[RMDB]
RNA sequence: GGGAACGACUCGAGUAGAGUCGAAAACAGAAUUCAGGGUCAAGGUAAAGACAGUCACUGAGCCCGCCAUCGCGGUGUAAGUCAGGUUGCCAUUGCCAUCAUCGACAGGCGCUGACAGCGUCACCGAUCCAUGAGGUAAUUUCGAUUACCUCAUGGAAAAAGAAACAACAACAACAAC
Reactivity to 2A3 in 0.01 (KOAc 150mM, MgCl2 10mM, bicine 150mM(pH8.5), 24C), signal-to-noise 6, nucleotides 027 to 126: c030a020g140a120a120u170u080c030a060g040g040g010u040c040a060a100g060g000u080a110a050a010g080a060c020a020g070u070c030a020c110u020g020a020g050c020c010c000g000c040c020a190u160c100g010c010g040g030u040g000u070a070a060g030u010c020a020g040g100u290u150g010c020c010a040u040u080g020c030c010a060u080c030a020u080c060g030a030c040a090g000g000c010g010c030u020g030a040c030a030g040c020g070u040c010a010c020c010g010a030
Reactivity to DMS in 0.01 (KOAc 150mM, MgCl2 10mM, bicine 150mM(pH8.5), 24C), signal-to-noise 8, nucleotides 027 to 126: c100a120g000a090a090u010u010c080a050g000g010g010u000c030a100a100g010g020u010a040a100a120g010a070c090a080g010u000c090a060c040u000g000a120g010c100c010c020g000c110c150a070u010c150g010c020g000g000u000g020u010a070a090g000u010c030a030g000g010u000u000g030c010c010a130u000u000g000c020c010a060u000c250a130u000c080g000a040c060a080g000g010c010g010c010u000g000a030c090a090g010c100g000u000c020a050c030c020g010a180